[RMDB]
RNA sequence: GGGAACGACUCGAGUAGAGUCGAAAAGGGCUGCGUGUCAAGUCUAUGGACUCGACUCUUGCACAUCUACGUCUUAGGUUUGCGCCAAUUCGUGGUAAGCUAGGGUCAAUGAGCUUAUAGGUGUUAUAAAGACUCGCUGGUGUUUGUCUCCUUGAGGCCGUACUUGUGUCUUCGGACACAAGUACGGAAAAGAAACAACAACAACAAC
Reactivity to 2A3 in 0.01 (KOAc 150mM, MgCl2 10mM, bicine 150mM(pH8.5), 24C), signal-to-noise 1, nucleotides 027 to 156: g070g040g010c030u010g010c000g020u080g030u000c070a150a080g000u000c010u010a000u020g000g070a080c010u010c030g010a000c000u010c010u000u010g040c030a090c020a040u070c040u000a000c000g010u010c010u020u150a170g060g010u060u090u160g190c170g010c020c010a000a000u000u000c000g040u000g000g000u030a060a020g000c000u000a000g030g030g000u010c010a000a130u170g020a000g010c000u090u120a000u000a050g000g010u000g010u190u110a190u070a180a130a020g000a000c000u000c040g000c010u010g070g000u050g070u000u100u110g060u000c080u060c050c000u070u090g090a120g010g110
About this RNA:
The record gives the reactivity of an RNA of 207 nucleotides to 2A3. Source: RMDB library PDB130, as collected in RNAgym. For 2A3 the reverse transcriptase was SuperScript II with manganese. Conditions: 150 mM KOAc, 10 mM MgCl2 and 150 mM bicine (pH 8.5), 24 C.